[RMDB]
RNA sequence: GGGAACGACUCGAGUAGAGUCGAAAAGGCUGCGCUGUGCCGAGCGGGCAAUUGCCGUCGCACGCCGGGGCAGCAACGUUGCCGAGCAGCUCGAUGUGACGCCGCUGGGUGUGAUCACCGAGCAGGACCAUCAGCCAGCGUUCGCGCUGGCUGAUGGAAAAGAAACAACAACAACAAC
Reactivity to DMS in 0.01 (KOAc 150mM, MgCl2 10mM, bicine 150mM(pH8.5), 24C), signal-to-noise 1, nucleotides 027 to 126: g040g030c000u000g020c170g030c010u020g030u000g010c000c020g000a140g060c020g010g010g020c000a220a080u000u020g000c180c200g000u000c140g010c000a090c050g000c020c040g050g010g010g010c000a000g000c050a040a010c060g010u000u000g010c010c010g010a140g010c060a050g030c000u000c060g020a000u000g010u000g010a190c280g020c030c010g000c220u030g000g030g010u000g010u000g000a180u030c020a050c030c000g000a060g000c010a220g010g000a130